[RMDB]
RNA sequence: GGGAACGACUCGAGUAGAGUCGAAAAAUACCGGAUAUUCAUUCUAGGCGGCAUCGUUGGAGGUAGAAAGUAUUUCGGCUUAGGAAGGGCUCGCGGCAUAUCAACUUAAAGGAGGGGUGAUGGCCUAAAUUUUAAUAAAAUUCGUUUUAUUGAAAUUAAAAGAAACAACAACAACAAC
Reactivity to DMS in 0.01 (KOAc 150mM, MgCl2 10mM, bicine 150mM(pH8.5), 24C), signal-to-noise 9, nucleotides 027 to 126: a080u030a110c030c010g010g000a070u020a050u010u020c070a080u010u010c050u010a080g010g010c050g010g010c050a040u010c070g000u010u010g000g010a060g000g010u020a040g010a070a060a080g010u020a000u000u010u010c050g000g010c050u000u020a090g010g010a070a070g010g000g010c040u000c070g010c080g000g000c060a050u010a060u020c090a060a100c090u010u020a050a070a090g010g000a040g010g010g000g000u000g000a050u010g000g010c020c020u000a030
Reactivity to 2A3 in 0.01 (KOAc 150mM, MgCl2 10mM, bicine 150mM(pH8.5), 24C), signal-to-noise 3, nucleotides 027 to 126: a000u120a050c010c000g010g010a040u040a070u060u100c060a050u050u000c040u060a030g010g010c010g020g000c030a020u010c020g040u010u060g040g030a050g000g020u020a020g030a020a070a000g030u000a050u010u050u050c010g000g000c010u030u070a030g000g020a020a060g000g030g000c020u030c040g060c030g010g010c020a020u030a010u060c010a000a070c010u010u090a060a040a020g050g000a010g000g020g000g000u020g020a030u030g020g000c000c000u000a000